[RMDB]
Overview
This 177-nucleotide RNA was probed chemically with DMS. Conditions: 150 mM KOAc, 10 mM MgCl2 and 150 mM bicine (pH 8.5), 24 C. Source: RMDB library TTRINS, as collected in RNAgym.
RNA sequence: GGGAACGACUCGAGUAGAGUCGAAAAGAUAUGGAUGCAUCAGAGUUAGCGCCGAAUGACCCUUUGAAAUAUCGGAAACGAUAUAUAAGAAGCAUUCGGCGCUAACGACGAAGAUGCAUCCUAAGUCGAGAGCACUAUUGUUCGCAAUAGUGCUCUCAAAAGAAACAACAACAACAAC
Reactivity to DMS in 0.01 (KOAc 150mM, MgCl2 10mM, bicine 150mM(pH8.5), 24C), signal-to-noise 2, nucleotides 027 to 126: g000a050u010a300u000g040g030a000u000g010c030a000u000c000a070g010a210g000u000u000a000g010c010g020c000c000g010a030a000u000g000a250c220c190c010u010u020u010g000a250a150a050u000a010u000c010g000g000a180a080a220c010g000a000u000a000u000a050u010a110a300g000a040a050g000c000a040u000u010c010g000g010c010g030c000u000a000a000c000g010a180c230g020a040a130g000a000u010g000c010a000u000c000c020u000a010a150g000u000c110